[RMDB]
RNA sequence: GGGAACGACUCGAGUAGAGUCGAAAAGUCCUCCAGACGUACAAGAGCUACCUGGAGCGCCUCCUUGAGGCACUCAGAGAUGCGGUAGUGGGAAGAGACCGAUAUGCCAGAGGAGGUCCUGAGGACGCGUUAGAUGAUGCUUCGGCAUCAUCUAACGAAAAGAAACAACAACAACAAC
Reactivity to 2A3 in 0.01 (KOAc 150mM, MgCl2 10mM, bicine 150mM(pH8.5), 24C), signal-to-noise 2, nucleotides 027 to 126: g020u040c000c000u000c030c050a000g010a090c080g080u070a010c030a220a150g010a000g140c030u010a010c010c020u030g000g060a000g000c020g010c000c010u020c010c050u030u190g070a160g030g000c010a000c020u110c050a030g050a030g010a190u250g050c040g040g020u010a030g040u130g080g080g060a110a090g090a010g040a080c000c040g030a020u030a020u160g060c010c010a010g030a020g070g040a010g000g000u020c000c020u050g050a060g050g040a010c030g000
Reactivity to DMS in 0.01 (KOAc 150mM, MgCl2 10mM, bicine 150mM(pH8.5), 24C), signal-to-noise 2, nucleotides 027 to 126: g000u010c030c000u000c010c040a150g020a060c080g000u000a040c050a180a140g020a210g010c040u010a040c060c020u000g020g010a040g000c120g000c010c000u040c000c200u010u010g010a060g010g040c000a020c060u000c030a150g000a130g000a060u000g020c120g020g010u000a030g050u020g020g020g000a200a120g000a110g010a030c070c020g000a080u000a080u000g000c030c020a300g000a070g000g000a130g000g000u000c020c040u010g010a070g000g010a060c100g020
An RNA of 177 nucleotides, treated with 2A3 and DMS and read out base by base. 2A3 adducts were read by reverse transcription with SuperScript II with manganese. For DMS, 1,587 sequencing reads were counted. The RNA was probed in 150 mM KOAc, 10 mM MgCl2 and 150 mM bicine (pH 8.5) at 24 C.